[RMDB]
RNA sequence: GGGAACGACUCGAGUAGAGUCGAAAACUGGGUGGGCUCUGAUCCUAUUUGUAGGGCGGGCUAAGUCCUUGUUCCACUCCUUCUUGCAGUGGAUCUUGCCGCUUCUCUGAACAUGAUUGAAAUGCCCACAGCACUUGCAGAGCAAGCAGAAAAGACAAUUAGUGCAUGCUUUCGAGCAUGCACUAAUAAAAGAAACAACAACAACAAC
Reactivity to 2A3 in 0.01 (KOAc 150mM, MgCl2 10mM, bicine 150mM(pH8.5), 24C), signal-to-noise 1, nucleotides 027 to 156: c010u070g080g100g100u060g070g000g070c080u060c080u150g030a030u000c010c010u050a110u180u120u040g100u040a040g000g000g060c060g010g010g060c060u190a020a000g060u080c100c040u010u080g080u150u000c000c000a000c020u050c020c070u300u250c010u110u160g000c170a000g000u000g000g000a010u000c020u020u010g140c020c000g020c000u240u110c000u060c000u040g040a030a010c060a090u290g050a140u000u140g000a070a090a230u160g010c000c000c020a000c000a000g000c040a040c040u000u000g010c070a050g040a030g110c030a010a010g000c020a040g180a110a130a020a000g060a020c060a190
Structure probing data (2A3) for a 207-nucleotide construct. The reactions ran in a buffer of 150 mM KOAc, 10 mM MgCl2 and 150 mM bicine (pH 8.5), at 24 C.